[RMDB]
RNA sequence: GGGAACGACUCGAGUAGAGUCGAAAACGGUGCUCCCACUUGAGAAAACUUUGAAAGGUACUCUCGUGCUUAUGCAAAGAAUUUGGGGGCUGAUGAUUUUCUGAGAAGGGUAGCAUCUGUGUUCUACCGCCACGCAAACUGGGCCUCUGUAAAGGGCAGAAGUUGUACUUUUCGAAGUACAACUUCUAAAAGAAACAACAACAACAAC
Reactivity to DMS in 0.01 (KOAc 150mM, MgCl2 10mM, bicine 150mM(pH8.5), 24C), signal-to-noise 1, nucleotides 027 to 156: c020g010g010u000g040c050u000c010c000c010a150c080u020u000g010a160g020a080a040a050a160c000u020u000u000g020a050a120a120g000g000u000a070c010u000c080u010c230g020u000g020c020u000u000a130u010g000c060a060a070a070g000a040a180u000u010u000g000g010g060g010g060c010u000g000a130u000g000a160u010u000u000u000c020u000g020a120g000a130a150g000g040g040u000a040g010c040a090u000c050u000g000u010g040u000u000c040u000a040c060c000g040c030c040a050c030g000c050a040a040a100c040u010g010g000g000c010c000u000c080u020g000u010a040a080a120g020g020g110c110
Reactivity to 2A3 in 0.01 (KOAc 150mM, MgCl2 10mM, bicine 150mM(pH8.5), 24C), signal-to-noise 2, nucleotides 027 to 156: c040g030g030u030g000c000u010c020c010c010a030c050u040u090g050a060g040a100a070a010a030c030u020u060u110g030a100a100a010g050g010u060a080c040u060c030u040c300g040u020g010c010u150u170a130u220g000c020a020a150a090g040a170a200u130u170u210g010g010g010g000g000c010u010g000a010u000g000a010u000u050u040u040c030u020g040a030g060a180a110g070g020g020u130a000g000c020a040u060c070u120g020u010g010u100u010c010u040a080c000c000g000c040c020a050c050g080c040a060a100a110c030u010g010g020g070c000c000u080c020u000g060u230a030a120a080g040g010g050c020

This 207-nucleotide RNA was probed chemically with DMS and 2A3. High DMS reactivity at an A or C suggests that its Watson-Crick edge is free. DMS adducts were read by reverse transcription with MarathonRT. The 2A3 profile rests on 828 reads. Source: RMDB library OK3TST, as collected in RNAgym.